[RMDB]
RNA sequence: GGGAACGACUCGAGUAGAGUCGAAAAGAUAUGGAUUUGCUGGAGCUCAACACACUAGCUCGGAAACGAGCACAGUGGUUGAGCGUUGAAAGCAAAUCCUAAGUCAAAAGUGAGCUUCGGCUCACAAGACCCUCACUAUGUUCGCAUAGUGAGGGUCAAAAGAAACAACAACAACAAC
Reactivity to 2A3 in 0.01 (KOAc 150mM, MgCl2 10mM, bicine 150mM(pH8.5), 24C), signal-to-noise 2, nucleotides 027 to 126: g010a000u060a070u120g000g000a000u000u010u010g000c010u020g060g040a000g030c010u020c010a020a030c300a000c000a000c170u020a020g030c000u000c030g010g030a070a100a040c020g000a010g020c020a050c100a130g010u000g000g010u010u000g010a000g030c000g000u020u000g090a020a020a000g000c000a040a010a000u000c000c010u000a050a000g060u020c020a090a010a080a170g000u000g000a000g020c000u060u130c300g120g000c030u030c000a010c000a000a050
Reactivity to DMS in 0.01 (KOAc 150mM, MgCl2 10mM, bicine 150mM(pH8.5), 24C), signal-to-noise 2, nucleotides 027 to 126: g010a070u000a300u000g000g010a010u040u000u000g020c000u000g000g000a090g000c000u000c000a020a000c000a080c000a020c000u000a040g000c000u000c000g000g000a090a080a210c000g020a000g000c000a010c130a010g090u000g010g000u000u010g000a000g000c020g000u000u000g000a120a160a020g030c000a000a000a030u000c000c000u000a020a100g000u000c030a080a130a070a100g000u000g000a020g030c000u010u000c240g000g010c010u000c000a000c000a080a050
The record gives the reactivity of an RNA of 177 nucleotides to 2A3 and DMS. Values cover nucleotides 27 to 126. The RNA was probed in 150 mM KOAc, 10 mM MgCl2 and 150 mM bicine (pH 8.5) at 24 C.